Record summary
Source: RMDB library TTRINS, as collected in RNAgym. Chemical mapping of a 177-nucleotide RNA with DMS. The DMS profile rests on 1,164 reads. In probing experiments dimethyl sulfate is read out at A N1 and C N3, which are open when not base-paired. The reactions ran in a buffer of 150 mM KOAc, 10 mM MgCl2 and 150 mM bicine (pH 8.5), at 24 C.

RNA sequence: GGGAACGACUCGAGUAGAGUCGAAAAGAUAUGGAGUUUCAGAGCGUCAGUGGGACUAUCGAAGGCAAAGUCGGAAACGACUUUGCCUUCGACGAAUCCCACGACGCGACGAAGAAACUCCUAAGUCCUUGGUUUAACAGUUCGCUGUUAAACCAAGAAAAGAAACAACAACAACAAC
Reactivity to DMS in 0.01 (KOAc 150mM, MgCl2 10mM, bicine 150mM(pH8.5), 24C), signal-to-noise 1, nucleotides 027 to 126: g000a110u000a300u000g010g020a020g000u000u000u000c010a050g000a220g010c000g030u000c030a110g040u000g020g000g030a050c040u000a160u010c000g020a010a020g000g000c020a000a000a000g000u020c000g020g000a140a110a210c020g050a010c000u010u010u000g010c000c020u000u000c000g010a000c060g020a110a200u000c000c000c000a010c010g010a000c010g030c000g000a050c240g020a200a120g000a000a000a000c010u000c010c000u000a020a110g020u000c090